The data come from the RNA Mapping Database (RMDB), library OK2TST. This 177-nucleotide RNA was probed chemically with DMS and 2A3.

[RMDB]
RNA sequence: GGGAACGACUCGAGUAGAGUCGAAAAACACUAACACUUCCGGUCAUGUGUCAAGUCUCAUUUGAUAACCUUGAACAAGUAGGGGUCAUGUUUGAUAAGCCCAAGUUCCUGAAGAUCACGGGUCCGGGGGCGAUAAUUUAUUCGUAAAUUAUCGCCCAAAAGAAACAACAACAACAAC
Reactivity to DMS in 0.01 (KOAc 150mM, MgCl2 10mM, bicine 150mM(pH8.5), 24C), signal-to-noise 1, nucleotides 027 to 126: a060c050a070c050u000a040a090c120a040c050u010u000c050c040g020g000u000c070a140u000g000u000g030u010c040a070a090g000u000c060u000c060a090u000u000u000g020a100u000a040a080c070c020u010u000g000a060a080c120a090a080g000u000a100g030g000g000g000u000c040a020u010g000u000u000u000g010a090u000a090a160g000c010c020c010a080a080g010u000u000c010c020u010g020a060a160g000a120u000c120a070c130g000g070g000u020c040c060g040g010
Reactivity to 2A3 in 0.01 (KOAc 150mM, MgCl2 10mM, bicine 150mM(pH8.5), 24C), signal-to-noise 1, nucleotides 027 to 126: a000c000a000c010u030a100a020c070a040c040u070u080c040c000g010g000u020c020a020u070g000u000g000u090c040a050a050g030u010c030u020c100a090u060u030u100g120a100u100a150a120c010c010u040u000g060a080a030c070a230a060g100u130a040g080g000g020g010u020c040a050u090g110u000u080u080g070a090u040a100a060g020c010c000c030a000a010g080u040u010c010c000u020g000a080a010g010a010u040c000a030c050g040g000g040u000c020c010g000g000

Conditions: 150 mM KOAc, 10 mM MgCl2 and 150 mM bicine (pH 8.5), 24 C.